[RMDB]
RNA sequence: GGGAACGACUCGAGUAGAGUCGAAAAGGGAGCAAAAGACAGGCAUCAACGCCAAGGAGGGCGGUGUCGGCAUCCUGGGCAUCCGCACUCGCCAGCUCAUGCACGAGCGCCGCCUCGAGCUGCUGGACGCCCCGUUAUAUUUCGAUAUAACGGGGCGAAAAGAAACAACAACAACAAC
Reactivity to 2A3 in 0.01 (KOAc 150mM, MgCl2 10mM, bicine 150mM(pH8.5), 24C), signal-to-noise 2, nucleotides 027 to 126: g020g050g030a070g050c040a090a040a060a060g150a070c090a050g000g080c000a040u040c090a130a050c100g000c030c000a040a050g180g040a040g030g040g040c010g030g000u030g000u020c020g020g040c020a030u050c020c030u000g010g000g060c000a020u040c030c020g000c020a030c000u090c040g040c010c000a020g000c030u060c100a030u160g020c060a060c200g000a040g100c050g100c040c080g040c050c000u000c000g000a000g020c000u070g020c020u040g020g020a060
Reactivity to DMS in 0.01 (KOAc 150mM, MgCl2 10mM, bicine 150mM(pH8.5), 24C), signal-to-noise 2, nucleotides 027 to 126: g000g000g000a070g010c060a040a060a080a080g040a120c100a100g030g010c070a110u010c140a100a090c130g010c040c060a120a080g000g030a060g010g030g000c050g000g000u000g030u000c030g020g000c080a030u010c050c010u000g020g010g000c060a050u030c100c050g030c020a090c040u010c030g000c020c020a040g020c020u010c170a100u010g000c020a080c000g000a020g000c060g020c080c190g010c090c000u000c030g000a070g010c030u000g020c010u000g000g000a300
Description: The record gives the reactivity of an RNA of 177 nucleotides to 2A3 and DMS. Source: RMDB library OK2TRN, as collected in RNAgym. 2A3 adducts were read by reverse transcription with SuperScript II with manganese. The RNA was probed in 150 mM KOAc, 10 mM MgCl2 and 150 mM bicine (pH 8.5) at 24 C.